[RMDB]
RNA sequence: GGGAACGACUCGAGUAGAGUCGAAAAGGAGUCCCCGAUCGAAUGUCCAUAGGCAGAGAAACCUCUGGAGUCCUCUAGACCGCAAGGAGGAAAUUACCAGCAGGGGGUGAUCCACCCGGAGAUGAGCUAAUCCAGAACUUCGGUUCUGGAAAAAGAAACAACAACAACAAC
Reactivity to DMS in 0.01 (KOAc 150mM, MgCl2 10mM, bicine 150mM(pH8.5), 24C), signal-to-noise 6, nucleotides 027 to 129: g080g000a090g000u000c040c010c000c120g020a040u000c040g030a100a060u040g010u040c000c130a100u070a110g000g000c000a060g020a220g020a120a120a190c040c020u050c050u020g030g010a100g030u000c010c030u050c000u000a110g030a110c120c130g040c160a070a090g000g000a030g020g010a020a070a060u010u040a050c080c050a040g040c100a000g030g030g040g000g020u000g010a070u000c000c000a160c000c000c010g030g030a070g010a040u000g000a040g030c070u030a070a130
Reactivity to 2A3 in 0.01 (KOAc 150mM, MgCl2 10mM, bicine 150mM(pH8.5), 24C), signal-to-noise 3, nucleotides 027 to 129: g060g010a000g070u020c000c000c010c000g030a080u040c020g020a120a080u060g040u040c000c010a060u080a080g020g000c050a020g030a000g040a100a070a020c030c000u030c020u000g000g020a020g020u040c030c010u030c000u030a020g070a160c040c060g070c120a110a070g030g010a000g000g020a010a020a070u060u070a080c040c010a010g020c040a020g000g000g000g000g000u040g020a020u010c020c000a050c000c010c020g000g020a050g000a020u120g000a020g030c030u070a050a040
Source information
This 170-nucleotide RNA was probed chemically with DMS and 2A3. DMS adducts were read by reverse transcription with MarathonRT. Conditions: 150 mM KOAc, 10 mM MgCl2 and 150 mM bicine (pH 8.5), 24 C. 2A3 adducts were read by reverse transcription with SuperScript II with manganese.